[RMDB]
RNA sequence: GGGAACGACUCGAGUAGAGUCGAAAAUUGUCUGGGCUGCACCAUCCAAUGAUGACGUUUUCUUUUGAUGAAUCCACUUACUUUAAUGAUCAUGUAUGGCAAGCCUUAGAGAAUAUGUGGACACAGGGACAGGUGCUGUGUUUUUGCACAGGAAAUCUGGGAAUAGGUUAUUCGUAACCUAUUCCCAAAAAGAAACAACAACAACAAC
Reactivity to 2A3 in 0.01 (KOAc 150mM, MgCl2 10mM, bicine 150mM(pH8.5), 24C), signal-to-noise 2, nucleotides 027 to 156: u080u040g120u090c010u020g000g000g000c010u060g030c050a060c010c000a000u040c030c030a050a190u060g000a040u010g060a070c100g020u050u030u000u130c010u000u170u050u180g110a100u120g000a010a050u050c030c000a060c040u080u100a030c000u170u160u070a130a090u180g040a050u030c000a040u090g050u050a040u040g000g020c020a060a020g000c010c000u050u020a020g010a000g030a020a020u150a030u210g030u050g020g000a010c000a000c000a090g060g010g020a000c000a000g030g000u010g120c000u000g000u000g010u000u010u040u150u050g000c000a000c000a000g030g000a030a300a000u100c050
Reactivity to DMS in 0.01 (KOAc 150mM, MgCl2 10mM, bicine 150mM(pH8.5), 24C), signal-to-noise 2, nucleotides 027 to 156: u000u000g000u000c020u000g020g030g030c010u000g020c060a120c030c010a110u020c050c070a080a140u010g020a110u000g010a070c080g010u000u000u000u000c020u010u000u000u000g020a190u000g000a070a100u000c020c040a070c070u010u000a050c050u000u000u000a090a110u000g020a070u000c040a100u000g010u000a050u000g000g060c060a130a110g020c030c030u010u000a050g000a100g010a040a080u000a050u000g020u000g020g010a070c060a080c050a120g010g000g000a140c030a120g010g020u000g000c000u000g020u010g020u000u000u010u000u000g000c020a070c050a060g000g000a060a080a120u000c080